Record summary: The data come from the RNA Mapping Database (RMDB), library RFM100. Chemical mapping of a 177-nucleotide RNA with DMS and 2A3.

[RMDB]
RNA sequence: GGGAACGACUCGAGUAGAGUCGAAAAGGAAAGUGCCGCAGAAAAGAUACCGCCGACCCCGUCCUCGGACGGGAGGUAAGGGUGAAAUGGUGCGGUAAGAGCGCACCGCGCUGGUGGCAACAUCAGUCGACGUAGAACAGUUCGCUGUUCUACGUCGAAAAGAAACAACAACAACAAC
Reactivity to DMS in 0.01 (KOAc 150mM, MgCl2 10mM, bicine 150mM(pH8.5), 24C), signal-to-noise 1, nucleotides 027 to 126: g010g020a040a030a110g000u000g030c000c060g000c140a060g020a050a090a030a010g000a030u020a000c000c030g080c000c000g000a110c080c000c000c030g050u000c000c030u040c300g000g020a000c000g000g030g000a000g000g040u000a050a000g000g010g000u000g000a070a030a010u020g000g000u020g000c000g000g000u020a020a000g000a300g010c010g000c060a000c050c000g010c230g000c000u030g020g040u010g010g000c060a150a120c080a000u020c000a010g000u000
Reactivity to 2A3 in 0.01 (KOAc 150mM, MgCl2 10mM, bicine 150mM(pH8.5), 24C), signal-to-noise 2, nucleotides 027 to 126: g130g060a130a100a020g110u100g060c030c040g020c050a000g040a040a020a020a000g240a020u040a010c010c000g000c000c010g000a030c000c000c000c000g000u010c010c010u050c140g080g000a010c010g000g000g000a000g010g000u000a000a020g020g000g000u020g000a000a020a000u060g000g000u000g000c000g000g000u000a000a000g000a000g000c000g000c000a000c000c000g000c020g000c000u020g000g030u010g010g000c040a060a050c000a060u010c010a000g020u030

Values cover nucleotides 27 to 126.